[RMDB]
The data come from the RNA Mapping Database (RMDB), library RFM100. This 177-nucleotide RNA was probed chemically with DMS and 2A3. For DMS the reverse transcriptase was MarathonRT. For 2A3, 1,108 sequencing reads were counted. The reactions ran in a buffer of 150 mM KOAc, 10 mM MgCl2 and 150 mM bicine (pH 8.5), at 24 C.
RNA sequence: GGGAACGACUCGAGUAGAGUCGAAAACUUGCGGGCCAUUUGCCGCUGGUAGCGGGCGAGGUUGCGGGCCUUGCGGUCCAGAUGCUUCGGGUUGGCGAUCUUCUCGCCUGUCGACAGGACAGCAAAGUUUCGCUCCUUAUUUCGAUAAGGAGCGAAAAAAAGAAACAACAACAACAAC
Reactivity to DMS in 0.01 (KOAc 150mM, MgCl2 10mM, bicine 150mM(pH8.5), 24C), signal-to-noise 2, nucleotides 027 to 126: c060u000u020g030c030g000g000g000c030c030a070u030u020u040g010c010c030g000c010u060g040g000u030a060g080c060g000g010g000c040g020a030g000g040u000u000g020c300g000g000g000c010c030u000u040g010c170g000g000u010c000c020a220g030a100u040g000c090u020u040c000g000g000g010u020u000g000g000c030g000a040u000c120u000u020c070u000c020g000c050c020u040g010u020c020g000a100c180a120g020g000a000c010a050g000c060a050a070a140g040
Reactivity to 2A3 in 0.01 (KOAc 150mM, MgCl2 10mM, bicine 150mM(pH8.5), 24C), signal-to-noise 2, nucleotides 027 to 126: c000u040u100g000c000g000g010g000c020c000a140u010u020u120g030c030c050g050c050u000g100g060u080a030g000c020g000g000g030c010g000a020g000g020u030u120g000c000g010g040g030c000c000u040u130g030c060g020g000u000c000c040a010g010a210u090g030c040u070u070c040g060g000g000u060u070g020g000c040g000a040u040c040u140u010c010u010c020g050c020c000u010g080u030c030g070a140c070a080g070g010a040c020a050g060c020a030a010a040g030